Chemical mapping of a 177-nucleotide RNA with 2A3 and DMS. For 2A3 the reverse transcriptase was SuperScript II with manganese. Reactivities are rounded to 0.1 and cut off at 0 and 3. It was measured as part of the RMDB library M2PK90.

[RMDB]
RNA sequence: GGGAACGACUCGAGUAGAGUCGAAAAUAAAAUACGGUGUAAGAACAGCCCAACUUACACCGUGCGGCACAGCGGAAAGGCUGAUGUCGUAAAAUGGGCUAAUCGUAAAUAAACGAAAUAAAAAAAACACAUAAGCAUGAUUCGUCAUGCUUAUGUGAAAAGAAACAACAACAACAAC
Reactivity to 2A3 in 0.01 (KOAc 150mM, MgCl2 10mM, bicine 150mM(pH8.5), 24C), signal-to-noise 4, nucleotides 027 to 126: u080a000a120a010a010u160a010c000g000g000u000g000u000a010a010g030a150a020c020a050g020c000c000c010a010a020c010u000u000a000c000a000c000c000g000u010g020c000g000g000c000a000c000a010g000c040g250g280a220a090a080g150g000c000u020g030a250u010g020u000c000g000u000a000a000a000a050u100g000g000g010c010u010a020a100u030c000g020u020a050a170a200u180a180a300a020c020g040a020a070a010u280a090a040a030a020a000a000a010a010
Reactivity to DMS in 0.01 (KOAc 150mM, MgCl2 10mM, bicine 150mM(pH8.5), 24C), signal-to-noise 1, nucleotides 027 to 126: u010a100a090a130a100u000a040c010g000g010u010g000u000a010a000g000a110a020c030a040g030c000c000c020a300a090c010u000u000a000c000a000c000c000g030u000g000c010g030g010c000a000c000a000g020c010g060g000a100a120a120g000g040c000u000g000a080u000g010u020c000g000u000a090a030a070a070u010g000g020g050c000u010a080a090u000c040g000u010a080a060a110u010a070a070a020c010g010a010a110a100u030a020a010a010a040a040a040a140a160